[RMDB]
RNA sequence: GGGAACGACUCGAGUAGAGUCGAAAAGAUAUGGACGAGCUCGAUAAGCCAUAUGUCGGAAACGACAUGAUGGCUUUUGACGAGCGAGUCCUAAGUCAAAAGAAUCGGAUCUUCGGAUCCGAUUCAAGAGUAUGCAGUAGUUCGCUACUGCAUACUCAAAAGAAACAACAACAACAAC
Reactivity to 2A3 in 0.01 (KOAc 150mM, MgCl2 10mM, bicine 150mM(pH8.5), 24C), signal-to-noise 2, nucleotides 027 to 126: g010a010u030a030u080g010g000a000c010g000a010g000c010u010c010g080a110u050a270a030g000c000c000a020u000a010u010g020u010c000g000g020a080a030a020c030g000a010c010a000u110g160a030u020g050g000c000u000u020u000u010g030a000c000g010a000g000c020g010a000g010u000c000c000u000a010a010g010u000c000a020a070a000a240g010a020a000u000c000g000g010a000u000c000u050u110c300g070g000a000u000c000c000g000a000u000u000c000a000a000
Reactivity to DMS in 0.01 (KOAc 150mM, MgCl2 10mM, bicine 150mM(pH8.5), 24C), signal-to-noise 5, nucleotides 027 to 126: g020a040u000a300u020g000g000a020c000g010a300g000c000u000c010g010a130u010a020a030g020c000c000a020u010a030u000g020u000c000g010g010a090a080a120c000g010a010c000a000u000g010a010u000g010g020c010u000u000u010u000g010a140c080g000a010g000c000g000a210g000u010c000c000u000a010a080g010u010c020a090a070a140a170g000a010a000u000c000g010g000a020u000c000u000u020c240g020g000a000u000c000c000g000a000u000u000c000a050a070